Conditions: 150 mM KOAc, 10 mM MgCl2 and 150 mM bicine (pH 8.5), 24 C. The record gives the reactivity of an RNA of 177 nucleotides to DMS and 2A3. 2A3 adducts were read by reverse transcription with SuperScript II with manganese. It was measured as part of the RMDB library OK2TRN. Reactivities are given for positions 27 through 126. For DMS, 2,181 sequencing reads were counted.
[RMDB]
RNA sequence: GGGAACGACUCGAGUAGAGUCGAAAAGCUACGCGUAAUAUUAUAGCCGGCAUAUAUCGUAGCGCCGCGUAAUUAGCCGCGAUCGCGUACGUAUACGGCUAGCCGAUUAGCGCCGUAGCAUCGGCUAUCUCUCACCAGAUUUCGAUCUGGUGAGAGAAAAAGAAACAACAACAACAAC
Reactivity to DMS in 0.01 (KOAc 150mM, MgCl2 10mM, bicine 150mM(pH8.5), 24C), signal-to-noise 3, nucleotides 027 to 126: g020c000u000a000c020g010c030g000u000a090a050u000a020u020u010a120u000a030g000c000c010g000g000c210a150u020a080u000a020u010c050g020u000a080g010c010g000c300c020g020c000g010u010a100a150u010u020a150g040c250c020g000c020g000a020u000c000g030c000g000u010a000c010g010u000a020u000a030c030g000g020c010u000a010g020c220c170g010a000u010u020a270g020c010g000c110c070g010u000a010g010c010a070u010c050g010g000c070u000a070
Reactivity to 2A3 in 0.01 (KOAc 150mM, MgCl2 10mM, bicine 150mM(pH8.5), 24C), signal-to-noise 3, nucleotides 027 to 126: g000c000u010a000c000g010c000g010u000a090a010u010a110u300u080a080u040a080g000c010c000g060g130c130a020u030a010u000a020u260c020g000u010a010g010c010g020c000c000g000c010g010u030a230a300u150u250a190g130c070c030g030c000g050a070u160c020g020c040g050u000a010c010g000u000a010u010a040c020g000g000c010u010a000g020c030c080g040a010u000u040a060g050c000g020c060c050g020u010a010g010c000a010u040c010g070g050c030u040a070